[RMDB]
RNA sequence: GGGAACGACUCGAGUAGAGUCGAAAAGAGCGAUUCCUGACUCAUGGCAGAAGGUAACCGGGGGUGCUUGAUAAGUUGUUCCCCUAUGUGUGAACACAUGGGAACAGUCGGAAUUGCUAGCUACUUCACCCGUAUCAGAUCACGAGCCCUCACUGUCGCACGCAUAAGACUUCGGUCUUAUGCGUGCAAAAGAAACAACAACAACAAC
Reactivity to 2A3 in 0.01 (KOAc 150mM, MgCl2 10mM, bicine 150mM(pH8.5), 24C), signal-to-noise 1, nucleotides 027 to 156: g110a000g000c000g010a060u010u010c030c080u090g050a060c030u030c050a060u190g040g000c000a030g060a110a030g090g040u120a100a050c060c060g000g000g000g000g000u050g010c020u030u020g020a020u120a190a110g010u040u050g000u090u020c000c030c000c020u070a000u110g040u000g020u030g120a210a050c000a000c010a070u080g000g030g000a000a000c010a080g080u080c030g030g020a040a000u030u000g000c010u010a020g000c020u050a050c010u050u010c040a050c040c000c060g010u050a140u170c030a030g000a100u030c000a000c160g020a010g000c010c000c000u070c060a040c040u110g020u070c070
Annotation: Structure probing data (2A3) for a 207-nucleotide construct. For 2A3 the reverse transcriptase was SuperScript II with manganese. The 2A3 profile rests on 671 reads. Values cover nucleotides 27 to 156. The reactions ran in a buffer of 150 mM KOAc, 10 mM MgCl2 and 150 mM bicine (pH 8.5), at 24 C.